This 177-nucleotide RNA was probed chemically with 2A3 and DMS.
2A3 adducts were read by reverse transcription with SuperScript II with manganese.
It was measured as part of the RMDB library OK2TST.

[RMDB]
RNA sequence: GGGAACGACUCGAGUAGAGUCGAAAAGUAUUUCUCGUGGCAAGACUAACCCUGCACUUACUCCGGAACGCGUUCUUGGCGUUUAUCUUUUGGCAGACCCUGGGCGCUCGGAUCUGCUCAUGAAUCCCUUCCUACUGGAAUUCGUUCCAGUAGGAAGAAAAGAAACAACAACAACAAC
Reactivity to 2A3 in 0.01 (KOAc 150mM, MgCl2 10mM, bicine 150mM(pH8.5), 24C), signal-to-noise 2, nucleotides 027 to 126: g020u000a170u030u080u040c030u010c020g010u060g040g020c070a080a080g020a100c050u030a040a080c010c010c050u030g060c040a010c040u080u210a040c050u060c010c040g000g030a050a020c010g000c010g050u130u070c070u100u130g060g020c030g040u000u080u050a080u040c030u040u100u090u090g040g000c000a020g020a100c010c010c010u050g000g050g000c040g010c040u050c020g040g000a050u020c020u040g000c010u000c070a030u090g090a070a060u080c000c000
Reactivity to DMS in 0.01 (KOAc 150mM, MgCl2 10mM, bicine 150mM(pH8.5), 24C), signal-to-noise 5, nucleotides 027 to 126: g010u010a110u000u000u000c020u000c040g030u000g010g010c050a070a050g010a090c070u010a110a110c060c010c020u000g010c070a070c060u000u000a100c080u010c060c050g010g020a070a050c090g000c030g010u000u010c090u010u010g020g000c070g020u000u000u000a070u010c040u000u000u000u000g010g020c040a050g020a080c030c020c030u000g010g000g000c050g020c040u000c070g000g010a040u000c020u000g000c030u000c080a060u010g000a110a110u010c040c060

DMS (dimethyl sulfate) methylates the pairing face of unpaired adenines and cytosines.